RNA sequence: GGGAACGACUCGAGUAGAGUCGAAAAACUGAUCAGGUAUACGUACCUGAUCAGAACCAGUGUCAUUUUUGUGAUCUGCAGCUAGUAUUCUCGCUCCAGUUGCAUAGUCACAAAAGUGAUCAUUGAAGCUCGUCGAUGAAUUCGUUCAUCGACGAGCAAAAGAAACAACAACAACAAC
Reactivity to 2A3 in 0.01 (KOAc 150mM, MgCl2 10mM, bicine 150mM(pH8.5), 24C), signal-to-noise 2, nucleotides 027 to 126: a000c000u000g000a010u010c000a000g000g020u000a050u020a060c290g080u000a000c010c000u020g000a000u000c000a000g000a000a000c010c010a020g040u020g000u030c000a010u000u000u030u010u000g020u000g000a040u000c000u020g000c000a000g010c010u070a020g040u040a140u280u150c200u090c200g020c040u060c020c030a000g020u000u000g000c000a010u020a060g000u000c010a010c000a000a000a000a000g000u000g000a000u100c020a010u020u090g080a050a000